[RMDB]
RNA sequence: GGGAACGACUCGAGUAGAGUCGAAAAGAUAUGGACGAGGGUGGAGAUAGCGAGCUAUGAAGUCGGAAACGAUGGAGCUCAGCUAUCGCUGACCUCGUCCUAAGUCAAAGCAUGCUUCGGCAUGCAACCACAAACCCUAGUUCGCUAGGGUUUGUGGAAAAGAAACAACAACAACAAC
Reactivity to DMS in 0.01 (KOAc 150mM, MgCl2 10mM, bicine 150mM(pH8.5), 24C), signal-to-noise 2, nucleotides 027 to 126: g010a030u000a300u000g000g000a000c010g010a060g020g000g030u000g000g000a020g000a030u000a000g020c000g060a030g010c000u000a200u030g000a100a210g010u000c000g000g000a200a080a230c000g030a000u000g000g000a010g040c020u000c010a060g020c010u000a020u000c020g000c000u000g000a050c000c000u000c000g000u000c000c000u000a000a080g000u000c020a190a040a130g000c000a000u000g000c000u000u030c170g020g000c010a010u000g000c010a030a060
Reactivity to 2A3 in 0.01 (KOAc 150mM, MgCl2 10mM, bicine 150mM(pH8.5), 24C), signal-to-noise 1, nucleotides 027 to 126: g030a020u070a020u110g010g000a000c040g000a010g030g080g040u170g060g030a080g000a030u000a010g000c000g000a000g000c000u030a200u300g050a000a000g010u000c010g030g020a080a040a020c010g000a010u030g000g040a010g030c000u010c090a060g000c000u000a000u000c010g000c010u010g040a010c000c000u000c010g010u000c000c000u010a000a000g000u000c030a000a000a110g000c010a000u000g000c000u090u080c160g060g000c010a000u010g030c000a000a020
This 177-nucleotide RNA was probed chemically with DMS and 2A3. It was measured as part of the RMDB library TTRDEL. For DMS the reverse transcriptase was MarathonRT. Reactivities are given for positions 27 through 126.